[RMDB]
RNA sequence: GGGAACGACUCGAGUAGAGUCGAAAACUAACACUGGUCAGUUCUCCCAGAAUUGGAAGAAAAAAUUGGACUGGUUCCUGUGGAUGGACAGUAUAAGUGGCUUUCAACCUAGCUAUUAUGCAGACCGAUCACUGACUAACUUCGGUUAGUCAGUGAUAAAAGAAACAACAACAACAAC
Reactivity to DMS in 0.01 (KOAc 150mM, MgCl2 10mM, bicine 150mM(pH8.5), 24C), signal-to-noise 3, nucleotides 027 to 126: c070u000a080a120c150a050c090u010g010g010u010c020a160g010u010u010c000u010c020c000c010a100g010a090a140u000u000g000g010a020a120g030a000a050a090a080a070a190u000u010g010g000a150c040u000g010g020u010u010c040c040u000g010u010g010g010a100u000g000g010a050c080a060g020u020a020u010a020a060g030u000g000g000c010u000u000u000c180a110a160c190c140u010a040g010c000u000a060u000u010a050u000g020c020a120g000a110c030c040g010
Reactivity to 2A3 in 0.01 (KOAc 150mM, MgCl2 10mM, bicine 150mM(pH8.5), 24C), signal-to-noise 2, nucleotides 027 to 126: c010u030a120a010c020a000c090u040g000g000u020c020a040g010u010u000c010u040c010c010c010a040g130a190a150u160u070g040g050a060a030g160a100a180a020a020a010a110u170u180g030g000a010c030u030g090g000u080u110c040c030u070g020u030g040g010a030u080g020g030a050c050a040g020u030a010u000a070a110g110u100g050g020c000u020u060u070c100a090a070c060c020u050a020g000c010u020a040u150u010a010u140g000c010a020g020a050c020c000g000
Chemical mapping of a 177-nucleotide RNA with DMS and 2A3. For 2A3, 1,917 sequencing reads were counted. Conditions: 150 mM KOAc, 10 mM MgCl2 and 150 mM bicine (pH 8.5), 24 C. The DMS profile rests on 1,698 reads. For DMS the reverse transcriptase was MarathonRT.